[RMDB]
RNA sequence: GGGAACGACUCGAGUAGAGUCGAAAAGCGUACUACGACUCUUUUGACGCCUUAAGGUCAGAGGUCUUCCCAAAUAGGAAGACCGACGAAGACCCAUAGGCGAUAAGAGUCGUAUCGCAAACUGGUAGUAUGUUCGUUCGCGAACAUACUACCAGAACACCCCCGUAAAGUUCGCUUUACGGGGGUGAAAAGAAACAACAACAACAAC
Reactivity to 2A3 in 0.01 (KOAc 150mM, MgCl2 10mM, bicine 150mM(pH8.5), 24C), signal-to-noise 1, nucleotides 027 to 156: g020c010g050u150a110c040u020a000c040g000a000c000u040c020u000u110u150u130g290a120c010g000c000c000u030u020a110a080g000g000u000c010a010g000a040g040g000u010c020u010u000c000c050c040a170a240a130u240a040g000g000a030a040g000a000c010c000g030a060c010g050a080a060g000a000c070c000c000a080u180a080g020g000c000g010a040u260a000a000g000a000g010u020c000g000u000a010u000c000g000c000a160a000a000c000u000g000g000u000a010g170u000a010u000g040u010u000c000g020u030u090c300g010c000g230a000a000c000a000u000a000c000u000a000c000c000a010g010a000a000